Description
An RNA of 207 nucleotides, treated with 2A3 and read out base by base. The data come from the RNA Mapping Database (RMDB), library M2RFPK. For 2A3, 1,193 sequencing reads were counted.

[RMDB]
RNA sequence: GGGAACGACUCGAGUAGAGUCGAAAACUUAUCCGGUUUUAACGCUGUUUUAUUGGAGCAAAGGUUUACGGAUAAACAACUAAUAAUUAAACCUUUUGUGUGCGAAACGUGGUUGUUUAACGUACUCACUGCCCCCAGGGAUUCGUCCCUGGGGGAACGUACUAAUCGUCUUCGGACGAUUAGUACGAAAAGAAACAACAACAACAAC
Reactivity to 2A3 in 0.01 (KOAc 150mM, MgCl2 10mM, bicine 150mM(pH8.5), 24C), signal-to-noise 2, nucleotides 027 to 156: c040u020u010a000u010c000c000g000g030u000u030u000u080a030a010c030g010c040u050g260u190u120u090u160a120u130u260g140g020a020g020c010a020a000a000g010g000u030u000u010a000c000g000g000a000u040a050a110a000c040a030a000c050u230a070a160u180a170a020u180u120a010a010a000c000c000u010u010u040u110g040u000g000u000g050c080g070a110a060a020c030g000u050g030g000u070u040g010u010u030u070a070a000c000g020u010a030c000u040c060a040c060u090g030c010c000c000c000c010a000g010g000g000a010u030u060c070g010u050c070c000c020u000g000g000g010g000g010a000a000